[RMDB]
RNA sequence: GGGAACGACUCGAGUAGAGUCGAAAAUUGUAUAAUGAUUUCAGAUAAUUCGGCAGAUAAACUCGUAGAACGCGCUGCCGAACUGGUGGCUGCUGCAAAGCGCGCUGGUGCGGACGAGGUUGACGCACUGCAUUAGGGGUUUCGACCCCUAAUGCAGAAAAGAAACAACAACAACAAC
Reactivity to DMS in 0.01 (KOAc 150mM, MgCl2 10mM, bicine 150mM(pH8.5), 24C), signal-to-noise 1, nucleotides 027 to 126: u000u010g010u010a080u030a110a110u010g010a120u000u010u000c040a130g000a200u000a060a210u000u000c010g000g000c010a030g010a110u000a040a090a130c060u000c030g020u010a230g000a120a210c060g010c100g010c030u000g030c010c000g040a000a000c060u010g000g030u000g010g010c030u000g090c030u000g030c200a030a090a090g040c050g040c040g030c010u000g010g000u000g000c010g010g020a090c040g000a050g000g010u000u000g020a130c060g000c100a100